This 177-nucleotide RNA was probed chemically with DMS.
For DMS, 2,398 sequencing reads were counted.
The RNA was probed in 150 mM KOAc, 10 mM MgCl2 and 150 mM bicine (pH 8.5) at 24 C.

RNA sequence: GGGAACGACUCGAGUAGAGUCGAAAACGGAGGAGCUACGACCUCUACGGAGGUCGUAGCUCCUCCGAAAUUCAUCUUUUCGAGGUGAUGUAAAUCGAAGAAAGCGACUGGAUACGUCCAGUCGCAAGAUGCAUUAAAUGUUCGCAUUUAAUGCAUCAAAAGAAACAACAACAACAAC
Reactivity to DMS in 0.01 (KOAc 150mM, MgCl2 10mM, bicine 150mM(pH8.5), 24C), signal-to-noise 2, nucleotides 027 to 126: c040g020g010a030g050g080a050g010c020u010a020c030g030a060c010c000u000c000u020a100c210g040g010a040g070g050u000c000g060u000a010g020c000u010c000c000u000c000c010g010a000a010a070u010u000c010a010u010c010u000u020u000u010c140g000a060g010g010u010g000a070u010g000u010a090a060a060u000c110g010a130a120g000a100a110a170g000c000g000a000c000u000g000g000a040u000a030c140g030u010c000c000a010g000u010c000g020c000a010a000